[RMDB]
Overview:
Conditions: 150 mM KOAc, 10 mM MgCl2 and 150 mM bicine (pH 8.5), 24 C. An RNA of 177 nucleotides, treated with DMS and 2A3 and read out base by base. High DMS reactivity at an A or C suggests that its Watson-Crick edge is free. It was measured as part of the RMDB library RFM100. For 2A3 the reverse transcriptase was SuperScript II with manganese. For DMS the reverse transcriptase was MarathonRT.
RNA sequence: GGGAACGACUCGAGUAGAGUCGAAAAUAAGUGUAAACGAUAAAGGAGGUCCCGGGUCGAAGACAGCGGGGAGGUAGGCUUAGAAGCAGCCACCCUUUAAAGAGUGCGUAACAGCUCACCCGCCGAGAAAUCCCGUUCAAUUCGUUGAACGGGAUUUAAAAGAAACAACAACAACAAC
Reactivity to DMS in 0.01 (KOAc 150mM, MgCl2 10mM, bicine 150mM(pH8.5), 24C), signal-to-noise 4, nucleotides 027 to 126: u020a060a110g020u000g010u020a090a100a070c040g020a120u030a080a090a110g000g010a100g010g000u000c040c010c030g000g000g000u000c020g000a060a090g010a140c280a120g000c010g000g000g000g000a020g000g000u000a080g000g000c010u000u000a300g000a110a300g020c000a050g010c000c000a010c020c000c010u000u000u000a010a010a060g010a150g000u000g000c010g000u000a100a100c110a260g000c000u000c000a030c010c000c000g010c010c060g000a110g010
Reactivity to 2A3 in 0.01 (KOAc 150mM, MgCl2 10mM, bicine 150mM(pH8.5), 24C), signal-to-noise 1, nucleotides 027 to 126: u110a010a020g070u010g030u090a100a120a050c060g040a110u110a080a110a070g070g000a050g020g080u040c000c020c000g000g020g000u030c020g010a050a030g020a030c010a000g020c000g010g000g010g000a020g000g000u010a010g000g000c000u010u000a010g000a000a010g000c010a000g000c000c000a010c010c000c010u020u000u000a000a000a000g000a000g000u010g000c000g000u010a010a000c000a000g000c000u010c010a000c000c010c000g030c020c000g000a010g010